Description
This 177-nucleotide RNA was probed chemically with 2A3 and DMS. The reactions ran in a buffer of 150 mM KOAc, 10 mM MgCl2 and 150 mM bicine (pH 8.5), at 24 C. For DMS the reverse transcriptase was MarathonRT. For DMS, 1,465 sequencing reads were counted. DMS (dimethyl sulfate) methylates the pairing face of unpaired adenines and cytosines.
[RMDB]
RNA sequence: GGGAACGACUCGAGUAGAGUCGAAAACGUAAUGCAUAUCGUAUAUAGCUACGGCAUGCUAUAAUGCAUAUGCGCUAUACGCGUAGCGCCGCGUAGCGCAUGCCGCGAUCGUAAUUAAUAUCGCGGCGUAACUCGGAUCGUUCGCGAUCCGAGUUACAAAAGAAACAACAACAACAAC
Reactivity to 2A3 in 0.01 (KOAc 150mM, MgCl2 10mM, bicine 150mM(pH8.5), 24C), signal-to-noise 3, nucleotides 027 to 126: c020g050u080a140a000u070g000c000a000u040a010u040c030g020u020a050u000a010u030a190g060c050u010a030c130g080g000c020a000u060g020c030u040a020u020a140a150u060g020c020a040u010a030u200g010c000g000c010u060a050u010a210c010g020c010g080u170a100g180c070g060c220c020g000c010g000u010a010g000c010g000c040a010u060g000c040c000g000c000g000a020u020c060g060u080a200a070u220u140a080a070u150a020u170c010g000c000g000g000c020
Reactivity to DMS in 0.01 (KOAc 150mM, MgCl2 10mM, bicine 150mM(pH8.5), 24C), signal-to-noise 2, nucleotides 027 to 126: c080g020u020a090a100u000g010c000a010u000a060u000c050g010u010a080u000a070u010a050g020c070u000a140c080g000g000c130a010u000g000c010u000a060u010a040a080u000g040c130a040u010a070u000g000c000g040c030u010a080u000a050c040g030c050g010u000a110g000c210g040c150c020g010c040g000u000a020g010c000g000c020a030u000g000c000c000g000c030g010a000u000c150g010u010a080a110u000u000a100a080u000a080u000c000g020c000g000g010c030